[RMDB]
RNA sequence: GGGAACGACUCGAGUAGAGUCGAAAAGAUAUGGAGUGUUCAGCUUUUGACGGCUAGGUGUCGGAAACGACACCAUAGCCGAUAAGCUGAAACACUCCUAAGUCAAAGAUUCUCUUCGGAGAAUCAAGUUAUAUCGGUAGUUCGCUACCGAUAUAACAAAAGAAACAACAACAACAAC
Reactivity to 2A3 in 0.01 (KOAc 150mM, MgCl2 10mM, bicine 150mM(pH8.5), 24C), signal-to-noise 3, nucleotides 027 to 126: g010a010u060a030u140g000g000a010g010u010g000u000u010c000a000g010c030u180u150u270u300g300a210c040g000g010c010u000a010g000g000u000g000u000c010g000g010a040a050a050c010g000a010c010a000c000c000a010u000a000g000c000c000g000a000u010a020a000g010c000u010g010a000a020a000c000a000c000u000c000c000u000a020a000g010u000c030a100a020a110g000a000u000u000c000u000c000u020u100c300g140g000a010g000a000a010u000c010a000a020
Reactivity to DMS in 0.01 (KOAc 150mM, MgCl2 10mM, bicine 150mM(pH8.5), 24C), signal-to-noise 5, nucleotides 027 to 126: g000a040u000a300u010g010g000a020g020u000g000u000u000c010a010g000c000u010u000u000u010g020a230c150g010g010c000u000a000g010g020u000g010u000c010g010g000a070a070a170c020g010a010c000a000c000c000a030u000a000g010c000c010g000a040u010a010a010g020c000u000g000a050a020a020c010a000c000u000c000c000u000a010a100g000u000c030a110a140a170g000a020u000u000c000u010c000u000u010c190g040g000a020g000a010a000u000c000a060a110